Source: RMDB library OK3TST, as collected in RNAgym.
The record gives the reactivity of an RNA of 207 nucleotides to 2A3 and DMS.
For 2A3, 1,401 sequencing reads were counted.
For 2A3 the reverse transcriptase was SuperScript II with manganese.
High 2A3 reactivity points to a flexible backbone, as in loops and unpaired stretches.
Values cover nucleotides 27 to 156.
The reactions ran in a buffer of 150 mM KOAc, 10 mM MgCl2 and 150 mM bicine (pH 8.5), at 24 C.

RNA sequence: GGGAACGACUCGAGUAGAGUCGAAAAGGGAGAUACAAGAUACCAUCAAAACACCCGCAAGUUGACUUCGACGAGGUUGACCCACUUCCGAUUGACGGGAAUAUUCUCGCCGCUGUCCACGCCAUCAAUCGCCACGCCAAGCGUCUUAAUGAGGAGGAUUACCUGCUGGAUUCGUCCAGCAGGUAAUAAAAGAAACAACAACAACAAC
Reactivity to 2A3 in 0.01 (KOAc 150mM, MgCl2 10mM, bicine 150mM(pH8.5), 24C), signal-to-noise 2, nucleotides 027 to 156: g070g000g020a050g010a000u120a080c070a040a040g040a210u130a080c030c030a060u100c090a040a030a080a020c020a050c040c010c020g020c080a050a090g000u050u040g020a010c010u030u000c030g040a030c030g000a010g060g010u020u070g040a030c010c000c000a050c030u140u130c070c050g170a230u060u160g070a070c060g000g000g030a080a000u070a080u210u120c040u000c000g000c020c010g000c020u020g000u000c020c010a000c010g010c020c000a060u060c050a040a100u020c020g020c030c000a040c060g010c000c040a070a020g000c030g040u000c030u060u180a130a110u140g030a030g040g030a020g000g000
Reactivity to DMS in 0.01 (KOAc 150mM, MgCl2 10mM, bicine 150mM(pH8.5), 24C), signal-to-noise 1, nucleotides 027 to 156: g000g070g070a190g010a270u010a080c090a090a150g010a290u010a050c040c030a100u020c020a080a110a150a150c030a120c000c030c020g000c120a080a230g000u000u010g000a110c030u000u000c000g060a090c020g000a040g010g010u000u000g050a260c010c010c000a090c070u000u020c070c030g010a210u010u000g000a040c020g000g000g000a030a020u010a120u000u010c000u020c010g050c010c030g010c090u000g000u000c030c030a090c030g000c020c010a030u010c020a030a060u000c040g030c020c020a050c040g060c050c060a080a120g000c070g000u000c030u000u010a050a100u000g000a140g040g000a100g040g000